[RMDB]
RNA sequence: GGGAACGACUCGAGUAGAGUCGAAAAGAAAAUGGUACGAACGGUUCCAAAGGAGCCGUAGUUCAAAGCUAAGGCAUCGAUCUAAAAUCGUAUCAAAAAGGUAACGAGCUUGGCAAUGAACAAAAAACUCUAAUACAUUCUUCGGAAUGUAUUAGAGAAAAGAAACAACAACAACAAC
Reactivity to DMS in 0.01 (KOAc 150mM, MgCl2 10mM, bicine 150mM(pH8.5), 24C), signal-to-noise 4, nucleotides 027 to 126: g010a070a070a040a110u000g000g020u000a020c050g000a140a070c010g010g010u000u010c000c020a110a140a200g030g010a010g000c000c000g020u000a040g030u000u000c000a040a030a300g000c000u000a030a020g040g000c040a080u010c090g010a040u000c040u000a060a080a080a110u000c050g010u000a040u010c060a050a060a060a090a060g000g000u000a040a110c070g010a110g000c010u000u010g010g010c030a020a270u010g020a010a000c010a000a090a080a060a050a090
Reactivity to 2A3 in 0.01 (KOAc 150mM, MgCl2 10mM, bicine 150mM(pH8.5), 24C), signal-to-noise 3, nucleotides 027 to 126: g090a010a100a010a030u120g010g030u080a020c040g010a170a000c020g030g020u010u010c020c020a200a150a280g000g000a000g010c000c010g000u010a030g000u000u020c000a040a010a000g010c000u040a020a030g130g000c020a160u040c020g040a020u020c030u140a040a070a050a130u080c030g040u060a020u120c040a040a050a030a040a030g080g000u030a080a020c010g010a030g020c000u000u040g000g030c020a000a050u030g030a000a000c000a000a150a010a000a000a010